[RMDB]
RNA sequence: GGGAACGACUCGAGUAGAGUCGAAAACAUCAUGUACGCGCUUAACGACUCCGGUGGCGUUGCUGGUGCGACUCUUGAUAUUUACAUGGAGUACAUGGAGAAGCUGAUUCGUCGCUACAUCGACUGGAGCUCAGCACCGGUUCGCCGGUGCUGAGCUAAAAGAAACAACAACAACAAC
Reactivity to 2A3 in 0.01 (KOAc 150mM, MgCl2 10mM, bicine 150mM(pH8.5), 24C), signal-to-noise 1, nucleotides 027 to 126: c040a140u110c020a020u070g100u040a000c050g000c000g010c160u060u300a170a000c030g030a020c010u020c060c000g050g040u000g090g000c020g000u000u140g000c000u180g000g000u050g000c000g000a000c000u030c000u010u000g070a030u100a050u130u050u120a090c150a070u110g040g000a000g000u040a010c030a000u150g050g000a250g000a100a000g000c000u000g030a230u070u000c020g000u020c000g040c020u020a030c000a080u080c110g030a030c140u020g090g150